[RMDB]
An RNA of 177 nucleotides, treated with DMS and 2A3 and read out base by base. Values cover nucleotides 27 to 126. The RNA was probed in 150 mM KOAc, 10 mM MgCl2 and 150 mM bicine (pH 8.5) at 24 C.
RNA sequence: GGGAACGACUCGAGUAGAGUCGAAAAUAUCCUGCGUUCGCGCAGGAUACAGCACAAAACUCGGAGGGCGCGCACUCGGAGACAUAACAAAAAGCGAAGCAAGUGAGCUUAGAUUCGUCUAAGCUAAAUGGUCAGUUAUAUUCGUAUAACUGACCAUAAAAGAAACAACAACAACAAC
Reactivity to DMS in 0.01 (KOAc 150mM, MgCl2 10mM, bicine 150mM(pH8.5), 24C), signal-to-noise 6, nucleotides 027 to 126: u000a010u000c000c000u000g010c000g030u000u010c200g050c010g020c000a020g000g000a000u000a000c080a100g020c080a070c090a080a060a120a130c030u000c020g010g020a070g010g010g010c050g010c050g010c030a040c020u000c030g000g000a090g000a060c130a050u010a040a070c130a040a050a060a080a080g010c030g010a080a100g010c090a080a090g020u000g010a040g010c000u000u000a010g000a040u000u010c180g010u000c000u000a000a010g010c010u000a010a080
Reactivity to 2A3 in 0.01 (KOAc 150mM, MgCl2 10mM, bicine 150mM(pH8.5), 24C), signal-to-noise 6, nucleotides 027 to 126: u030a000u000c000c010u010g020c010g020u030u040c230g000c000g000c120a000g000g000a000u000a000c010a020g070c040a030c020a060a130a110a060c020u020c040g110g010a020g020g060g030c040g000c010g000c030a020c020u020c020g040g000a030g030a030c060a050u200a140a040c040a070a080a030a010a000g040c040g090a070a000g040c030a040a080g090u140g180a000g010c010u000u000a000g000a020u030u040c140g030u000c110u010a000a000g000c000u050a090a270